Chemical mapping of a 177-nucleotide RNA with DMS. DMS adducts were read by reverse transcription with MarathonRT. Conditions: 150 mM KOAc, 10 mM MgCl2 and 150 mM bicine (pH 8.5), 24 C. For DMS, 1,079 sequencing reads were counted.
RNA sequence: GGGAACGACUCGAGUAGAGUCGAAAAAGCCCAGUCAGGAGCUUGGAAUUACUAAGGAGGCGCCACCUCGGUCAGUAACUGGGUUGAAUAAAGUGGGUGGCUAGUAAGUGAGAUUUUAAAAGAUACAAUUUAUCACUGACUUCGGUCAGUGAUAAAUAAAAGAAACAACAACAACAAC
Reactivity to DMS in 0.01 (KOAc 150mM, MgCl2 10mM, bicine 150mM(pH8.5), 24C), signal-to-noise 1, nucleotides 027 to 126: a100g020c000c000c020a050g000u000c170a120g000g000a060g000c060u000u000g000g020a160a080u000u000a060c010u010a040a110g000g010a080g000g030c090g000c040c050a060c020c000u000c040g020g000u020c100a070g000u000a040a060c010u000g000g000g000u010u010g000a070a090u000a020a070a090g020u010g010g010g020u000g000g000c000u000a050g000u000a010a050g000u010g000a100g010a070u000u000u120u060a030a050a130a070g000a150u000a080c130a080